[RMDB]
RNA sequence: GGGAACGACUCGAGUAGAGUCGAAAACUGUUUGAUAAGACAAUGUUGUGAAGCUACCACGUGUUGGAUUAUGGCUGAACGCCUCUAAGUCAGAAUCCGUGCUAGAUACAAUGACCUUGUCCCGCGCAUGUCUAUGGUGUUUCGACACCAUAGACAUAAAAGAAACAACAACAACAAC
Reactivity to 2A3 in 0.01 (KOAc 150mM, MgCl2 10mM, bicine 150mM(pH8.5), 24C), signal-to-noise 6, nucleotides 027 to 126: c020u030g140u110u100u100g200a190u140a110a090g020a040c030a060a120u090g010u040u010g020u050g100a080a030g010c020u030a030c040c030a030c040g080u100g060u120u160g020g000a000u010u050a020u120g020g010c000u030g050a110a020c070g030c010c000u030c020u060a030a020g010u000c000a010g080a030a020u010c030c020g020u040g010c010u020a020g000a080u060a070c060a070a090u040g010a010c000c000u010u020g010u010c000c000c010g040c010g000c020
Reactivity to DMS in 0.01 (KOAc 150mM, MgCl2 10mM, bicine 150mM(pH8.5), 24C), signal-to-noise 5, nucleotides 027 to 126: c050u000g010u010u000u020g010a110u030a110a130g010a070c100a050a070u020g000u010u010g000u000g010a100a100g010c030u000a050c130c020a020c050g020u000g010u030u020g010g000a040u000u010a070u010g000g010c000u010g020a110a160c130g010c020c010u000c050u010a120a050g020u010c010a030g000a030a050u000c030c020g000u010g010c160u000a040g000a070u010a030c100a120a050u000g010a020c050c040u000u010g020u000c010c000c050g000c210g000c140